Description
Structure probing data (2A3) for a 207-nucleotide construct. It was measured as part of the RMDB library M2RFPK.
RNA sequence: GGGAACGACUCGAGUAGAGUCGAAAACGGCAAAAAAGCAAACUUGACCACCAAGGAUAAAAGAGAUCUUAUCAAAGGAUGCAAAAGAUAAUCUCACUUUUGACACCCACUGAUCUCGAACUUAAAGAAAACCGAGACUACUUCGGUAGUCUCGGAAGCAUUCAGUGCAGUUCGCUGCACUGAAUGCAAAAGAAACAACAACAACAAC
Reactivity to 2A3 in 0.01 (KOAc 150mM, MgCl2 10mM, bicine 150mM(pH8.5), 24C), signal-to-noise 1, nucleotides 027 to 156: c010g030g030c000a040a020a020a040a060a060g030c000a150a160a040c030u070u060g030a130c050c030a020c030c020a120a000g100g000a140u110a100a180a080a000g000a020g000a000u000c000u050u090a060u070c070a100a010a180g010g000a030u000g000c000a000a000a000a060g010a010u170a190a200u100c100u110c140a000c030u000u000u000u090g180a180c000a020c020c030c000a030c070u010g000a000u060c000u010c000g000a060a070c020u030u090a080a060a000g120a110a060a020a000c000c020g000a000g000a000c000u000a000c000u010u010c090g100g000u000a000g010u010c000u030c000g000g000a000a000